[RMDB]
RNA sequence: GGGAACGACUCGAGUAGAGUCGAAAAAUCUUCGACGGUGAUGUUGAUCCCGAGUGGGUAGAGAACUUGAACUCUGUGCUGGAUGACAACAAACUCUUGACUCUGCCUAAUGGAGAGCGUCUUUCUAUGACCAUGCUCCAUUCGUGGAGCAUGGUCAAAAAGAAACAACAACAACAAC
Reactivity to DMS in 0.01 (KOAc 150mM, MgCl2 10mM, bicine 150mM(pH8.5), 24C), signal-to-noise 1, nucleotides 027 to 126: a130u000c040u000u000c040g040a000c060g020g010u000g000a110u000g000u000u000g000a150u000c000c010c010g000a110g030u010g020g000g010u010a020g000a040g000a160a130c050u010u010g000a010a040c110u030c120u050g020u000g000c060u000g000g010a110u010g010a180c070a010a000c060a030a060a060c070u000c080u000u010g000a160c020u010c020u030g070c020c080u020a030a080u020g020g010a040g010a070g020c040g030u020c000u010u020u000c070u000a110
The data come from the RNA Mapping Database (RMDB), library OK2TST. Chemical mapping of a 177-nucleotide RNA with DMS. The DMS profile rests on 821 reads.